Chemical mapping of a 177-nucleotide RNA with DMS. Reactivities are given for positions 27 through 126. It was measured as part of the RMDB library M2PK50.
[RMDB]
RNA sequence: GGGAACGACUCGAGUAGAGUCGAAAACUCUGCCUCUUCGGAGGCAGAGAAACCCAGCACCGAAUCCAAUUUUCGACUCUAGGACGGACCCAAGCAACGGAAAAACGCCCCAGUUCGCUGGGGCGAACAUUCCGUUUGUGUUCGCACAAACGGAAUGAAAAGAAACAACAACAACAAC
Reactivity to DMS in 0.01 (KOAc 150mM, MgCl2 10mM, bicine 150mM(pH8.5), 24C), signal-to-noise 1, nucleotides 027 to 126: c040u000c020u000g000c020c000u010c010u010u020c240g010g000a060g020g020c000a030g010a010g010a040a120a100c030c000c000a080g030c140a060c050c000g020a110a010u000c120c070a090a120u000u000u000u000c000g010a020c010u000c000u000a050g010g010a100c020g000g010a300c000c000c000a130a060g020c090a040a010c020g000g000a030a060a040a070a150c010g010c000c000c000c000a000g010u000u030c160g020c000u000g010g040g030g010c020g000a000a000